The record gives the reactivity of an RNA of 177 nucleotides to 2A3 and DMS. For DMS the reverse transcriptase was MarathonRT. The DMS profile rests on 670 reads. For 2A3, 1,091 sequencing reads were counted.
RNA sequence: GGGAACGACUCGAGUAGAGUCGAAAAGAUAUGGAAUUCAGCAAGGACCCUUCGGGAGUAAUCGGAAACGAUUACAGAAGCUGAUGACCUGAAUUCCUAAGUCAAAAGGUGUCGUUCGCGACACCAACCUAGGUACGUCGUUCGCGACGUACCUAGGAAAAGAAACAACAACAACAAC
Reactivity to 2A3 in 0.01 (KOAc 150mM, MgCl2 10mM, bicine 150mM(pH8.5), 24C), signal-to-noise 1, nucleotides 027 to 126: g040a010u090a040u170g010g010a000a000u030u000c000a010g080c110a260a210g170g050a130c090c000c000u000u070c110g110g000g060a300g010u020a040a010u010c040g000g010a050a020a030c000g000a000u000u000a000c010a020g060a090a030g010c050u150g100a210u070g050a050c000c040u010g000a030a000u010u030c000c000u020a140a040g120u030c060a100a130a080a110g000g010u000g030u000c000g100u090u060c300g000c000g140a000c010a010c030c040a010a000
Reactivity to DMS in 0.01 (KOAc 150mM, MgCl2 10mM, bicine 150mM(pH8.5), 24C), signal-to-noise 1, nucleotides 027 to 126: g000a020u040a300u000g010g000a020a080u020u010c020a000g000c070a020a200g020g020a100c090c120c050u000u010c070g040g000g010a190g010u000a000a000u020c020g000g000a040a160a170c020g000a020u000u000a000c000a110g020a050a080g000c160u000g010a060u000g000a190c300c020u000g000a000a030u000u000c000c000u000a040a110g000u010c100a040a000a110a080g000g040u010g020u000c020g030u000u000c220g000c020g020a000c010a020c000c000a000a000